The data come from the RNA Mapping Database (RMDB), library M2RFPK. Chemical mapping of a 207-nucleotide RNA with 2A3.

[RMDB]
RNA sequence: GGGAACGACUCGAGUAGAGUCGAAAAGGGACGCCUUUAGAAGAAGAGGCUAGGUGGUAUUCCGGUGUGGGAUACUUGGUAAUAUGUAACGCUAAUUGCAUAAGAUUGUAGGACGUAAUUUACAGUCAAAACGGUCCUGCGUUCGCGCAGGACCGAACUGACUGGUAAGCUUCGGCUUACCAGUCAGAAAAGAAACAACAACAACAAC
Reactivity to 2A3 in 0.01 (KOAc 150mM, MgCl2 10mM, bicine 150mM(pH8.5), 24C), signal-to-noise 1, nucleotides 027 to 156: g010g020g010a010c020g000c000c020u070u100u130a170g040a250a000g020a070a000g000a020g010g000c000u030a060g020g000u000g080g090u050a060u010u090c030c040g160g020u110g030u190g050g010g000a010u030a050c000u030u060g040g010u060a100a060u080a060u110g020u010a010a010c070g020c200u070a000a110u130u080g000c010a020u040a190a000g010a060u020u080g040u020a010g070g010a030c050g020u030a060a030u050u020u130a030c000a010g050u010c040a000a040a000a080c010g000g000u020c000c000u000g000c000g010u010u030c210g000c000g060c020a000g010g000a000c000c000g000a000a000
The 2A3 profile rests on 700 reads. The RNA was probed in 150 mM KOAc, 10 mM MgCl2 and 150 mM bicine (pH 8.5) at 24 C. For 2A3 the reverse transcriptase was SuperScript II with manganese.